[RMDB]
RNA sequence: GGGAACGACUCGAGUAGAGUCGAAAAGAUAUGGAGGAUCCUACUACACCUAUAAUCACCUAUCGGAAACGAUAGGUGGUAGGUGGGUAGGAGUCCUCCUAAGUCAAAAUCGGGGUUCGCCCCGAAACGUUAAGACUUGCUUCGGCAAGUCUUAACGAAAAGAAACAACAACAACAAC
Reactivity to 2A3 in 0.01 (KOAc 150mM, MgCl2 10mM, bicine 150mM(pH8.5), 24C), signal-to-noise 1, nucleotides 027 to 126: g050a060u140a070u090g020g000a000g000g000a020u010c020c000u000a010c010u230a300c010a010c000c000u100a080u170a300a270u260c010a000c000c000u000a000u000c000g030g040a120a010a030c040g010a000u000a000g000g000u010g050g000u000a000g000g000u000g000g070g000u000a000g070g030a010g020u010c000c000u000c010c000u010a000a000g000u030c000a000a000a000a290u080c000g000g010g010g000u080u070c210g210c020c000c060c030g060a040a050a000
Reactivity to DMS in 0.01 (KOAc 150mM, MgCl2 10mM, bicine 150mM(pH8.5), 24C), signal-to-noise 1, nucleotides 027 to 126: g000a000u020a300u000g010g020a000g010g030a300u000c000c010u000a000c010u000a120c000a000c000c000u010a090u050a300a090u010c000a020c000c000u000a020u000c000g000g000a190a110a160c000g000a030u000a030g040g000u000g000g020u000a020g000g050u000g020g000g010u030a030g010g000a020g000u010c000c000u000c000c000u000a000a110g020u000c070a040a100a060a120u000c000g010g020g000g030u000u030c250g000c000c000c000c000g000a000a070a080